[RMDB]
RNA sequence: GGGAACGACUCGAGUAGAGUCGAAAAAGUUUUGAUAAGCUCAAGAUCACCUUCAAUUACUCAUCAAAGCAUCAAAGGUGCGGGAGUCUUCCGUUCCGAUUCCGAACGUCCCACCCACACAUUGGAAACUCUUAUGAAGGUUCGCCUUCAUAAGAGUAAAAGAAACAACAACAACAAC
Reactivity to DMS in 0.01 (KOAc 150mM, MgCl2 10mM, bicine 150mM(pH8.5), 24C), signal-to-noise 4, nucleotides 027 to 126: a090g000u000u000u010u000g000a070u000a070a090g010c130u000c080a040a080g010a060u000c090a060c060c030u010u000c060a100a120u000u000a040c060u000c040a060u000c070a050a050a050g000c040a030u000c100a040a090a150g000g010u000g020c060g010g010g010a070g010u000c090u010u000c080c030g010u000u000c020c030g000a110u000u010c080c040g010a060a080c080g010u010c010c010c000a170c020c030c020a050c130a050c110a100u000u000g010g000a120a130
Reactivity to 2A3 in 0.01 (KOAc 150mM, MgCl2 10mM, bicine 150mM(pH8.5), 24C), signal-to-noise 3, nucleotides 027 to 126: a020g030u050u040u050u070g040a050u040a070a020g020c020u030c120a040a020g010a080u080c030a050c050c000u080u060c030a080a160u150u070a080c010u030c040a070u030c020a130a040a040g040c020a010u030c050a110a060a050g030g020u050g000c020g010g020g010a060g070u010c040u100u040c030c020g030u040u000c020c000g050a060u100u010c020c020g030a030a020c000g040u010c010c000c000a030c010c000c000a070c010a020c010a090u080u080g010g030a160a090